[RMDB]
RNA sequence: GGGAACGACUCGAGUAGAGUCGAAAACGAACGAAUCGACCCGAAUAGGUUGUCUCAGUAAGUGCCGGUUUUCCGUAUUCAAGUCAGGGGGUCCCCCGUAUAUAAAUCAUUCCUCUCUUCACGAGUCAAAAUAGGCGUGAUUCGUCACGCCUAUUUUAAAAGAAACAACAACAACAAC
Reactivity to DMS in 0.01 (KOAc 150mM, MgCl2 10mM, bicine 150mM(pH8.5), 24C), signal-to-noise 1, nucleotides 027 to 126: c120g000a070a110c160g000a080a070u000c000g010a120c020c000c030g020a150a130u020a090g000g000u010u000g000u020c030u000c050a100g000u000a040a070g000u000g020c050c030g000g010u000u000u000u010c030c050g040u000a070u010u000c050a020a080g000u010c070a100g000g000g010g000g040u010c030c020c040c000c040g030u010a020u000a090u000a030a100a090u000c100a060u000u000c010c040u010c000u010c070u000u000c120a090c100g010a060g000u010c070